[RMDB]
This 177-nucleotide RNA was probed chemically with DMS and 2A3. 2A3 adducts were read by reverse transcription with SuperScript II with manganese. The reactions ran in a buffer of 150 mM KOAc, 10 mM MgCl2 and 150 mM bicine (pH 8.5), at 24 C. The 2A3 profile rests on 2,017 reads. The DMS profile rests on 2,196 reads.
RNA sequence: GGGAACGACUCGAGUAGAGUCGAAAAAGCCUGACAUGUCCUGUGGAGAAGAGGCAGCCACGGCCGUCAGGGAGCUGCAGCUUAUACUUCAAGCCCUGGGGACCAGCCAGGCAAAUAUGGCAGGUAGUCGCUUAGGUAGAUUCGUCUACCUAAGCGAAAAAGAAACAACAACAACAAC
Reactivity to DMS in 0.01 (KOAc 150mM, MgCl2 10mM, bicine 150mM(pH8.5), 24C), signal-to-noise 3, nucleotides 027 to 126: a050g020c010c000u020g000a000c000a090u000g000u010c040c080u010g030u020g000g010a150g000a120a090g010a050g000g010c040a080g010c020c040a070c080g000g030c040c120g010u000c090a040g020g010g000a070g000c050u000g000c120a050g010c050u000u010a100u000a300c070u010u000c060a040a090g010c130c000c020u000g000g000g000g000a060c080c080a160g000c030c010a010g000g050c110a040a020a040u010a040u000g000g010c010a040g000g010u000a160g010
Reactivity to 2A3 in 0.01 (KOAc 150mM, MgCl2 10mM, bicine 150mM(pH8.5), 24C), signal-to-noise 2, nucleotides 027 to 126: a000g050c000c010u000g020a010c010a010u040g130u200c010c050u100g020u090g050g030a080g030a160a040g040a070g090g000c060a040g000c000c020a040c050g080g050c040c050g110u090c040a070g000g020g040a040g000c020u060g030c020a040g000c010u130u120a110u100a160c030u030u100c030a110a010g000c000c000c010u010g000g010g010g060a100c030c010a040g070c000c000a010g020g000c000a030a030a050u140a030u030g040g000c010a000g020g000u030a040g090